[RMDB]
RNA sequence: GGGAACGACUCGAGUAGAGUCGAAAAUAAAACAUGGUUACCAUAUUGAUUCCCACAAGGUAGCCAUGAGUGGGAAUCAAAAUAUAAAUGCUGAGCGUUAGGAAAAACCUAAUGCUCAGCAAAAAAACAUUCUAUCAAUCUUCGGAUUGAUAGAAUGAAAAGAAACAACAACAACAAC
Reactivity to DMS in 0.01 (KOAc 150mM, MgCl2 10mM, bicine 150mM(pH8.5), 24C), signal-to-noise 1, nucleotides 027 to 126: u000a120a050a160a180c030a000u000g000g000u000u010a030c000c020a220u010a100u000u000g000a200u010u000c000c000c000a300c060a080a030g000g000u010a050g000c020c010a010u010g020a020g020u020g020g020g000a120a110u000c090a040a060a090a070u020a020u000a060a080a060u010g000c000u000g000a000g000c000g010u000u000a000g000g000a050a140a080a140a250c020c030u000a000a000u000g000c000u000c000a020g000c000a030a000a000a020a070a010a090